[RMDB]
RNA sequence: GGGAACGACUCGAGUAGAGUCGAAAAUUCUGCGAAGCGGCGGUGUUCAAUUAAAAAGCUGUGACGAUGCUUUAAGUGUAAAACUGUCCUCCAGCGACAUAGAGUAUAGUAUUCAGCAGACGCUAGAUGUCCAUACCCUUUUCGAAGGGUAUGGACAAAAAGAAACAACAACAACAAC
Reactivity to DMS in 0.01 (KOAc 150mM, MgCl2 10mM, bicine 150mM(pH8.5), 24C), signal-to-noise 1, nucleotides 027 to 126: u000u000c030u000g030c070g030a110a070g050c060g040g020c020g010g010u010g000u010u020c060a070a090u000u010a030a090a090a120a080g000c000u000g010u000g010a110c110g000a050u000g010c030u000u000u000a030a040g020u000g000u000a020a050a160a040c040u000g000u000c030c040u000c060c070a040g000c090g010a090c080a000u000a040g030a050g020u000a020u010a090g000u000a080u000u000c020a070g040c040a110g010a130c300g000c020u010a070g010a260